Annotation:
Conditions: 150 mM KOAc, 10 mM MgCl2 and 150 mM bicine (pH 8.5), 24 C. Chemical mapping of a 177-nucleotide RNA with 2A3 and DMS. Values are in units of 0.01, from 0 to 300, in steps of 10. For DMS the reverse transcriptase was MarathonRT.
[RMDB]
RNA sequence: GGGAACGACUCGAGUAGAGUCGAAAAUUCAAGGGUCAACCGUAUUUGAUAUUCAAUAAUAAAUUAUAGGCUGGGUGCAGAGGCUCAUGCCUGUAAUCCCAGCAUUUUGGGAGGCCAAGGUGGGUGACACGCUAAAUGCAUUCGUGCAUUUAGCGUGAAAAGAAACAACAACAACAAC
Reactivity to 2A3 in 0.01 (KOAc 150mM, MgCl2 10mM, bicine 150mM(pH8.5), 24C), signal-to-noise 1, nucleotides 027 to 126: u110u100c010a000a100g120g000g000u120c120a100a010c040c000g090u030a160u060u170u160g070a160u160a100u210u000c070a000a010u030a140a000u130a000a070a000u240u190a170u130a180g020g130c000u000g000g000g000u020g020c100a030g000a020g110g000c030u100c100a120u300g000c000c010u100g020u070a000a000u000c000c000c000a000g020c000a000u000u000u050u030g000g040g000a020g000g030c000c000a130a010g150g000u120g000g000g020u000g030a000
Reactivity to DMS in 0.01 (KOAc 150mM, MgCl2 10mM, bicine 150mM(pH8.5), 24C), signal-to-noise 2, nucleotides 027 to 126: u020u050c030a150a130g020g000g010u000c050a070a210c100c030g000u000a050u050u000u000g010a090u030a100u010u000c040a010a200u010a040a080u000a070a040a080u000u040a170u020a050g000g010c000u010g000g010g010u000g040c300a020g000a080g000g020c000u000c260a050u000g000c000c010u000g000u000a040a210u000c000c010c000a000g010c020a000u000u000u000u080g000g040g000a210g000g010c070c060a020a010g000g000u010g030g000g030u020g000a210